[RMDB]
RNA sequence: GGGAACGACUCGAGUAGAGUCGAAAAGCUCCAACUCUGGCGGGCACCUCGAGAAGUUGGCGAGGGGGUUCCUGAGUUCUAUCUGAACUGAGAUUCGGCGAGGGGCAGAAUUGGUAUACUCCCAGCCCGACAGGUGUUAUGAACGCCCGAAGCCAACGCAUCGACUUAGUUUCGACUAAGUCGAUGCAAAAGAAACAACAACAACAAC
Reactivity to 2A3 in 0.01 (KOAc 150mM, MgCl2 10mM, bicine 150mM(pH8.5), 24C), signal-to-noise 2, nucleotides 027 to 156: g050c000u000c040c010a010a100c040u070c040u060g040g000c050g010g000g000c030a040c050c020u130c040g070a070g030a190a000g050u000u000g000g000c000g020a030g000g000g000g000g000u020u000c020c000u060g060a020g000u000u000c030u060a300u150c110u240g040a040a010c050u060g080a030g040a200u120u220c080g050g010c000g060a100g000g020g050g000c110a050g080a090a110u090u100g060g000u090a060u110a170c050u100c000c000c000a010g000c000c010c000g030a000c000a010g060g000u060g040u120u150a150u140g060a030a000c020g260c110c020c000g030a040a000g020c000c000a000a010c040